Chemical mapping of a 177-nucleotide RNA with DMS and 2A3. For DMS the reverse transcriptase was MarathonRT. Conditions: 150 mM KOAc, 10 mM MgCl2 and 150 mM bicine (pH 8.5), 24 C.

RNA sequence: GGGAACGACUCGAGUAGAGUCGAAAAUACGACGAGAUGCUCAACUCGCUGGUGCAGGCCGCACUGGCACGGGUCGGCAUGCAGCAGAACAUGGACAUGCACAAGAUCUCGGCCUACGCGGGCAUUAAUUAUCGGCACUCUUCGGAGUGCCGAUAAUAAAAGAAACAACAACAACAAC
Reactivity to DMS in 0.01 (KOAc 150mM, MgCl2 10mM, bicine 150mM(pH8.5), 24C), signal-to-noise 1, nucleotides 027 to 126: u000a040c110g000a130c120g000a020g070a010u000g000c040u000c100a130a040c000u040c070g000c000u010g030g000u030g000c090a070g000g070c150c040g020c040a090c110u000g000g010c000a090c060g000g000g010u020c000g000g000c010a070u010g000c000a030g000c000a040g020a050a130c300a160u030g000g000a010c010a050u040g030c000a090c200a050a150g000a130u040c000u000c010g030g000c050c000u000a010c160g000c020g000g030g030c000a090u060u010a040
Reactivity to 2A3 in 0.01 (KOAc 150mM, MgCl2 10mM, bicine 150mM(pH8.5), 24C), signal-to-noise 2, nucleotides 027 to 126: u180a010c010g030a020c030g020a040g020a020u110g010c000u070c110a010a010c000u060c070g000c000u030g010g030u030g030c040a040g180g000c040c030g140c010a040c050u000g060g000c040a090c100g020g000g020u000c010g000g020c000a000u010g030c020a040g110c020a000g010a180a040c070a130u140g060g100a010c000a020u030g020c030a020c000a100a080g000a110u030c090u020c030g000g040c010c000u060a080c100g000c010g040g000g040c010a010u000u110a110